[RMDB]
RNA sequence: GGGAACGACUCGAGUAGAGUCGAAAAAGGUUGCUGCUGUAAGAAGUGUUACUGUCGAGUACAACAUUCAUGCUGUAUUAGACACACUACUUGCUUCUUCUAGUCUUAGAACCUUUGUUGUAGAUAAGUGGAUCACAGUUCGCUGUGAUCAAAAGAAACAACAACAACAAC
Reactivity to DMS in 0.01 (KOAc 150mM, MgCl2 10mM, bicine 150mM(pH8.5), 24C), signal-to-noise 8, nucleotides 027 to 129: a000g030g010u000u010g000c000u000g000c040u000g030u040a070a020g020a050a020g030u000g000u030u050a090c250u020g020u020c020g030a110g000u030a020c000a000a030c030a050u040u030c300a070u030g010c080u000g000u000a030u000u000a250g020a040c040a050c110a050c080u050a070c000u040u050g020c010u000u030c010u000u000c040u000a000g000u030c110u030u020a070g030a060a020c000c000u030u000u050g000u000u030g000u010a090g020a120u040a070a070g030u040g000
Reactivity to 2A3 in 0.01 (KOAc 150mM, MgCl2 10mM, bicine 150mM(pH8.5), 24C), signal-to-noise 9, nucleotides 027 to 129: a000g040g000u040u070g080c030u010g000c010u010g050u090a010a000g000a010a000g010u030g060u190u100a100c200u040g010u000c010g010a020g010u000a000c010a010a000c010a060u090u300c060a060u210g020c010u010g010u000a000u010u030a020g000a000c000a000c020a010c020u080a070c030u100u230g020c000u000u010c000u010u000c010u040a020g050u000c040u080u090a010g020a040a020c010c000u010u030u030g010u000u010g020u010a050g050a200u140a230a120g180u100g130
Structure probing data (DMS and 2A3) for a 170-nucleotide construct. The RNA was probed in 150 mM KOAc, 10 mM MgCl2 and 150 mM bicine (pH 8.5) at 24 C. 2A3 adducts were read by reverse transcription with SuperScript II with manganese. Reactivities are rounded to 0.1 and cut off at 0 and 3. For DMS, 43,375 sequencing reads were counted.